An RNA of 207 nucleotides, treated with 2A3 and read out base by base. The RNA was probed in 150 mM KOAc, 10 mM MgCl2 and 150 mM bicine (pH 8.5) at 24 C. For 2A3 the reverse transcriptase was SuperScript II with manganese.

RNA sequence: GGGAACGACUCGAGUAGAGUCGAAAAGAAAGAAAGAAAGUUCAUUGUUUAUCGGAAACUUUAAACUAAAACCAUUCAAACUUUUCCAGAAGUUAGUUUGAAUAGAAAUUAAAAAGAAACUUCUGAAUAACCUUAUCAUGCUUCGGCAUGAUAAGAACACUAUAUAGUACUUCGGUACUAUAUAGUGAAAAGAAACAACAACAACAAC
Reactivity to 2A3 in 0.01 (KOAc 150mM, MgCl2 10mM, bicine 150mM(pH8.5), 24C), signal-to-noise 2, nucleotides 027 to 156: g030a010a010a000g060a020a040a000g090a070a140a020g010u060u060c050a090u090u160g060u060u150u090a150u230c060g030g080a030a000a070c010u000u060u090a070a020a050c040u060a000a030a020a130c020c020a000u000u000c000a020a000a010c000u000u000u030u040c070c000a000g000a000a000g020u010u000a000g000u000u000u000g020a020a000u090a170g020a010a050a000u160u190a080a070a030a000a000g000a000a000a000c010u020u010c000u000g000a000a030u060a040a010c000c000u000u010a000u000c000a000u000g000c030u050u010c100g120g000c000a000u000g000a000u000a000a000g000a010a000